[RMDB]
RNA sequence: GGGAACGACUCGAGUAGAGUCGAAAAGAAACUGGCCGAACUCGAUCUGGAGGGUGUGCUCGUUUCCGUGAUCAGAAAGGGCUACAUGCUGAUCGACGAGGAUCGAUGAAGGAAUCAGGCAUGAGGGCCUCUUACAUUUCUUCGGAAAUGUAAGAGGAAAAGAAACAACAACAACAAC
Reactivity to 2A3 in 0.01 (KOAc 150mM, MgCl2 10mM, bicine 150mM(pH8.5), 24C), signal-to-noise 5, nucleotides 027 to 126: g080a010a100a010c060u040g040g000c030c010g040a050a020c010u000c020g050a100u010c060u100g080g040a030g030g040g000u070g030u070g030c010u010c040g140u010u040u000c010c010g130u130g100a140u140c040a030g070a070a050a020g070g040g000c040u110a040c030a030u100g120c010u040g020a080u060c040g070a080c050g070a080g070g040a060u030c020g020a050u060g060a070a040g050g030a050a070u180c030a030g070g000c020a030u090g030a060g030g080g000
Reactivity to DMS in 0.01 (KOAc 150mM, MgCl2 10mM, bicine 150mM(pH8.5), 24C), signal-to-noise 7, nucleotides 027 to 126: g000a080a060a080c030u000g010g010c020c010g020a090a270c120u000c010g010a070u010c080u000g020g010a100g010g020g020u000g030u000g000c020u000c070g020u000u000u000c010c040g030u000g010a090u000c100a070g000a040a060a080g000g010g010c020u000a060c030a050u010g010c030u010g000a060u000c060g010a110c060g020a190g000g000a040u010c020g000a040u000g010a300a120g010g010a050a080u010c060a040g000g010c030a060u000g000a110g010g010g000